An RNA of 207 nucleotides, treated with 2A3 and read out base by base. It was measured as part of the RMDB library OK3TST. Conditions: 150 mM KOAc, 10 mM MgCl2 and 150 mM bicine (pH 8.5), 24 C.
RNA sequence: GGGAACGACUCGAGUAGAGUCGAAAAAUUGAAAGGUGAAGAGAGAAAACUCCGGUCCCAAACAAACUGAGAUCACAGCUGGGCUCUGCCACUGUUAACCAUUUGUCCUCAGGUAUAUAACCUAAACUUUCAUUGCCUGUUUCCACAUAGUAAAGUAGUGCAGGAAAAUAUUCGUAUUUUCCUGCACAAAAGAAACAACAACAACAAC
Reactivity to 2A3 in 0.01 (KOAc 150mM, MgCl2 10mM, bicine 150mM(pH8.5), 24C), signal-to-noise 1, nucleotides 027 to 156: a020u090u050g010a000a010a000g000g010u040g040a100a010g000a000g010a000g000a000a120a020a030c050u050c060c020g030g000u020c000c000c020a020a050a030c010a020a030a010c000u040g010a010g000a140u100c020a020c000a040g000c070u070g030g000g000c040u070c090u230g000c020c010a010c010u000g010u030u000a020a000c010c000a010u000u000u070g020u000c020c010u300c010a000g000g010u000a080u030a030u030a080a020c000c090u030a110a000a070c060u130u100u030c030a050u070u010g000c010c000u020g020u000u040u000c020c000a020c010a090u300a090g070u300a030a000a300g300u300a080